Annotation
This 177-nucleotide RNA was probed chemically with DMS and 2A3. 2A3 adducts were read by reverse transcription with SuperScript II with manganese. The data come from the RNA Mapping Database (RMDB), library M2PK90. Values cover nucleotides 27 to 126. For DMS the reverse transcriptase was MarathonRT.
RNA sequence: GGGAACGACUCGAGUAGAGUCGAAAAUCUAUCACCAGCCCAUGUUUACGACACGAAUGGGCUGUUGCAAAUUACGUAUAGCUCUUGCAACUUCGUGUCGAAACGUUCCCAAGCUAUACGCCACAAAUACGCACAAAGUAUUCGUACUUUGUGCGUAAAAAGAAACAACAACAACAAC
Reactivity to DMS in 0.01 (KOAc 150mM, MgCl2 10mM, bicine 150mM(pH8.5), 24C), signal-to-noise 3, nucleotides 027 to 126: u000c020u000a120u010c080a080c050c050a000g030c000c000c010a170u030g000u000u010u020a130c040g010a040c050a030c040g000a050a030u000g000g010g010c010u010g020u000u020g000c160a040a040a210u000u000a120c030g010u000a000u000a020g000c010u010c160u000u020g020c070a070a090c130u000u000c020g010u000g020u000c020g000a070a050a230c060g000u000u000c010c000c000a140a040g030c010u000a000u000a010c010g020c140c210a060c180a050a050a090
Reactivity to 2A3 in 0.01 (KOAc 150mM, MgCl2 10mM, bicine 150mM(pH8.5), 24C), signal-to-noise 2, nucleotides 027 to 126: u000c000u030a160u130c010a020c070c000a000g020c000c010c000a020u060g060u060u200u070a050c060g020a010c000a000c010g030a040a030u070g030g010g000c010u020g000u010u000g020c010a020a060a120u240u080a020c020g000u000a010u010a020g010c010u010c060u120u100g050c040a080a110c060u040u020c000g000u000g000u020c010g030a150a060a000c030g000u010u000c000c000c000a000a020g020c000u010a020u000a010c000g000c010c000a130c020a030a090a040